The data come from the RNA Mapping Database (RMDB), library OK1LIB. Structure probing data (DMS and 2A3) for a 177-nucleotide construct.
[RMDB]
RNA sequence: GGGAACGACUCGAGUAGAGUCGAAAACGAGUAUCGGAUCUAGACCCAGGAUAAGGGAUGUCCCCAGCAGAAUAAGCAUCUAUUGGACAAUAGUAAAACCGGGAUACAUACUUUUGAUUAACAGCACCCAUAUUUAAUGGUUCGCCAUUAAAUAUGGAAAAGAAACAACAACAACAAC
Reactivity to DMS in 0.01 (KOAc 150mM, MgCl2 10mM, bicine 150mM(pH8.5), 24C), signal-to-noise 9, nucleotides 027 to 126: c060g000a070g010u010a050u020c030g020g010a070u000c050u010a100g010a200c020c020c010a070g000g010a090u020a070a080g010g010g010a080u010g010u010c070c010c010c030a110g000c060a030g020a100a070u030a090a110g010c060a090u020c020u000a040u000u010g010g010a060c110a040a040u020a020g000u010a080a040a100a080c120c090g000g000g000a090u010a040c080a060u000a060c030u000u020u000u000g000a170u020u030a070a060c090a060g010c300a070c140
Reactivity to 2A3 in 0.01 (KOAc 150mM, MgCl2 10mM, bicine 150mM(pH8.5), 24C), signal-to-noise 9, nucleotides 027 to 126: c030g000a020g040u040a040u080c020g020g040a020u010c010u020a040g090a170c000c000c020a030g090g030a110u080a130a100g050g020g010a030u050g060u040c010c000c000c000a020g030c020a010g050a200a090u180a160a010g020c020a030u030c020u050a060u040u080g050g050a010c040a080a070u040a040g080u120a040a040a050a030c020c010g010g020g020a010u040a060c030a030u100a060c030u060u100u070u120g130a110u120u150a090a040c030a040g030c020a060c010